[RMDB]
RNA sequence: GGGAACGACUCGAGUAGAGUCGAAAAGAUAUGGAGGUCCGAUGCUUUUGACGAAGCGAAUGUUCGGAAACGAACAAACUUCGAUAAGCAUGGACCUCCUAAGUCAAAAGGAUAGUUCGCUAUCCAAGUACUUCUCAAGGUUCGCCUUGAGAAGUACAAAAGAAACAACAACAACAAC
Reactivity to DMS in 0.01 (KOAc 150mM, MgCl2 10mM, bicine 150mM(pH8.5), 24C), signal-to-noise 2, nucleotides 027 to 126: g000a030u010a300u010g000g020a010g000g010u000c010c010g030a020u000g030c000u000u000u000u000g050a280c150g030a030a000g000c070g020a150a110u000g000u000u010c000g010g000a050a040a180c000g030a020a030c000a020a190a120c010u000u000c000g030a130u000a020a000g000c010a010u000g000g000a000c000c000u010c000c000u010a000a090g000u000c020a070a130a130a130g020g000a020u000a020g000u000u000c250g050c030u000a000u000c000c000a090a060
Reactivity to 2A3 in 0.01 (KOAc 150mM, MgCl2 10mM, bicine 150mM(pH8.5), 24C), signal-to-noise 1, nucleotides 027 to 126: g000a000u090a030u180g000g000a020g050g000u090c050c170g150a030u030g010c030u010u200u210u300g130a120c030g000a010a000g050c130g080a300a190u070g000u020u020c020g000g100a100a100a010c020g030a000a000c010a050a040a100c020u030u000c010g080a080u010a120a040g000c000a000u000g000g010a000c000c000u000c000c000u000a000a000g000u000c050a000a000a240a050g010g000a010u000a010g070u070u170c300g000c300u000a000u000c000c020a010a000
The record gives the reactivity of an RNA of 177 nucleotides to DMS and 2A3. For DMS the reverse transcriptase was MarathonRT. For 2A3 the reverse transcriptase was SuperScript II with manganese. The reactions ran in a buffer of 150 mM KOAc, 10 mM MgCl2 and 150 mM bicine (pH 8.5), at 24 C. It was measured as part of the RMDB library TTRDES. The DMS profile rests on 1,580 reads.